Chemical mapping of a 207-nucleotide RNA with DMS and 2A3. For 2A3, 1,493 sequencing reads were counted. The DMS profile rests on 2,733 reads. The data come from the RNA Mapping Database (RMDB), library M2RFPK.
RNA sequence: GGGAACGACUCGAGUAGAGUCGAAAAGAUUCGGCGGCCCUGUCAUGAGGCCGAAACGAAGGCACGUACCACUUCGAAUGGCGUCGGGGAGUCAGCGGCUAUAUAUGCGCCUAAUGCUGGCAUCCGGGAGAACCCUCAUCCUUCGGGAUGAGGGUAAGUAUACCUACAGCUUCGGCUGUAGGUAUACAAAAGAAACAACAACAACAAC
Reactivity to DMS in 0.01 (KOAc 150mM, MgCl2 10mM, bicine 150mM(pH8.5), 24C), signal-to-noise 1, nucleotides 027 to 156: g000a210u000u000c010g010g010c010g010g000c000c000c000u000g070u000c210a070u000g000a050g010g050c010c000g040a020a030a090c040g010a070a030g020g000c050a020c080g010u010a060c040c010a030c030u000u010c110g010a120a070u000g000g040c020g040u000c030g010g000g000g030a140g000u000c020a060g060c040g010g040c040u030a090u010a090u000a040u010g020c080g000c040c060u000a060a110u000g010c030u000g000g030c010a080u000c020c010g010g000g010a150g000a120a070c010c010c000u030c000a020u000c000c000u000u000c300g090g000g050a020u000g000a000g020g020g000u000a000a020
Reactivity to 2A3 in 0.01 (KOAc 150mM, MgCl2 10mM, bicine 150mM(pH8.5), 24C), signal-to-noise 2, nucleotides 027 to 156: g050a060u080u040c020g060g010c000g000g010c040c000c000u030g080u090c040a060u050g050a010g010g000c070c040g030a010a000a000c010g020a000a000g030g030c050a040c160g090u090a060c010c010a020c030u020u020c030g030a030a040u010g020g010c030g130u010c010g010g000g000g030a150g010u000c000a000g010c030g030g000c050u000a010u000a010u030a030u300g200c050g020c050c030u120a180a060u240g030c030u010g010g000c000a060u020c000c000g000g070g010a150g020a020a030c000c000c000u010c000a020u010c000c010u040u050c120g090g000g000a000u010g000a000g000g010g000u000a000a000